[RMDB]
RNA sequence: GGGAACGACUCGAGUAGAGUCGAAAAGGGCGGUACGAGCGCAGUGGCCGGCCAGCGUAUCCAGAUCACCCGUGGCUGACGUGUUGGUGGCGAGGAUCUCCGCGUCGCGUUCGGCGAGACGACGGCGGAUGCCUGUGUAAUUCGUUACACAGGCAUCAAAAGAAACAACAACAACAAC
Reactivity to DMS in 0.01 (KOAc 150mM, MgCl2 10mM, bicine 150mM(pH8.5), 24C), signal-to-noise 7, nucleotides 027 to 126: g000g010g010c030g020g000u000a050c090g010a100g020c050g030c050a090g010u010g000g010c020c020g020g020c030c040a080g010c080g030u010a080u010c050c040a080g000a140u000c060a070c040c020c050g020u000g010g000c070u000g010a100c090g010u000g010u010u010g010g020u010g010g010c030g000a150g000g010a060u000c040u000c030c020g010c030g010u000c040g010c030g010u000u000c070g010g010c040g010a100g010a050c040g010a070c040g010g000c070g010
Reactivity to 2A3 in 0.01 (KOAc 150mM, MgCl2 10mM, bicine 150mM(pH8.5), 24C), signal-to-noise 4, nucleotides 027 to 126: g010g020g030c040g030g020u080a070c070g030a060g050c050g000c070a040g050u090g070g010c000c000g010g000c010c010a020g010c020g030u100a070u030c020c000a020g020a140u060c010a040c020c020c020g050u040g080g000c070u070g060a050c030g040u090g110u160u140g020g030u040g020g000c030g010a050g030g010a050u010c020u000c020c030g030c020g020u050c010g000c020g020u070u050c040g070g040c040g020a040g010a020c060g010a030c010g020g040c030g040
Background:
Conditions: 150 mM KOAc, 10 mM MgCl2 and 150 mM bicine (pH 8.5), 24 C. This 177-nucleotide RNA was probed chemically with DMS and 2A3. The DMS profile rests on 14,078 reads. For 2A3, 10,001 sequencing reads were counted. Source: RMDB library OK2TRN, as collected in RNAgym.